An RNA of 177 nucleotides, treated with 2A3 and DMS and read out base by base. Conditions: 150 mM KOAc, 10 mM MgCl2 and 150 mM bicine (pH 8.5), 24 C.

[RMDB]
RNA sequence: GGGAACGACUCGAGUAGAGUCGAAAAGCGGCUAAUGCAAGAGGCCAAAAAAUGUUUGGAGGAAGAAAAACAAAGGCAGGAAGUGGCGGCGGCCUGACGGUGCGUGUGUGUCUGCAGAGAAGGGAGGUAGACCAGUAAAAUUCGUUUUACUGGUCUAAAAAGAAACAACAACAACAAC
Reactivity to 2A3 in 0.01 (KOAc 150mM, MgCl2 10mM, bicine 150mM(pH8.5), 24C), signal-to-noise 8, nucleotides 027 to 126: g060c040g020g000c050u080a110a060u150g030c020a060a030g040a070g050g030c010c040a000a010a030a010a000a090u160g040u040u050u040g070g010a060g060g030a060a040g050a050a120a030a010a000c080a050a060a010g040g000c030a030g040g060a100a040g030u040g060g020c020g010g010c010g010g020c000c010u020g020a040c030g020g020u060g020c040g010u100g000u000g010u010g020u030c020u050g010c030a010g020a010g010a110a030g050g020g000a030g000g040
Reactivity to DMS in 0.01 (KOAc 150mM, MgCl2 10mM, bicine 150mM(pH8.5), 24C), signal-to-noise 9, nucleotides 027 to 126: g010c110g010g010c020u010a070a090u020g020c110a080a080g000a120g010g000c030c030a000a020a080a080a080a070u020g010u010u010u010g010g010a090g010g010a070a070g010a050a050a050a070a070c110a060a070a090g010g010c030a050g000g010a080a060g020u000g000g010c050g010g010c060g000g010c020c030u000g010a050c090g000g000u000g000c060g010u010g010u010g000u000g000u010c040u010g000c060a050g000a060g020a060a070g000g000g000a050g010g010